[RMDB]
RNA sequence: GGGAACGACUCGAGUAGAGUCGAAAAGAUAUGGACCAUCUGGUACCCUCGAUGAAAGUAUUCGGAAACGAAUACUGGAGAGGACCAGAGUGGUCCUAAGUCAAAACCCCUAACUUCGGUUAGGGGAGAAUUCGUGAUACUUCGGUAUCACGAAUUCAAAAGAAACAACAACAACAAC
Reactivity to DMS in 0.01 (KOAc 150mM, MgCl2 10mM, bicine 150mM(pH8.5), 24C), signal-to-noise 2, nucleotides 027 to 126: g010a050u000a300u000g000g000a010c000c000a080u020c010u020g000g000u000a120c250c010c000u000c010g010a150u020g030a230a180a000g010u000a000u000u000c010g040g010a200a120a220c010g000a000a000u000a000c010u010g000g000a030g060a040g000g040a000c000c000a000g000a020g050u000g020g000u000c010c000u010a040a090g010u010c030a140a140a220a220c000c000c000c000u000a000a000c010u000u010c210g000g000u000u000a000g000g000g000g020a010
Reactivity to 2A3 in 0.01 (KOAc 150mM, MgCl2 10mM, bicine 150mM(pH8.5), 24C), signal-to-noise 2, nucleotides 027 to 126: g010a020u080a070u200g000g000a000c020c000a010u000c010u000g030g130u300a300c040c040c030u000c000g300a300u080g050a010a000a000g010u010a010u000u010c010g060g040a060a000a050c020g030a000a000u010a000c010u010g020g020a010g020a010g030g050a010c000c000a000g040a000g080u080g030g000u000c000c000u000a000a020g030u000c020a070a080a110a300c000c000c000c030u010a000a000c000u080u030c300g120g010u020u000a000g000g000g020g020a000

Structure probing data (DMS and 2A3) for a 177-nucleotide construct. The data come from the RNA Mapping Database (RMDB), library TTRDES. The reactions ran in a buffer of 150 mM KOAc, 10 mM MgCl2 and 150 mM bicine (pH 8.5), at 24 C. The 2A3 profile rests on 1,844 reads. For 2A3 the reverse transcriptase was SuperScript II with manganese.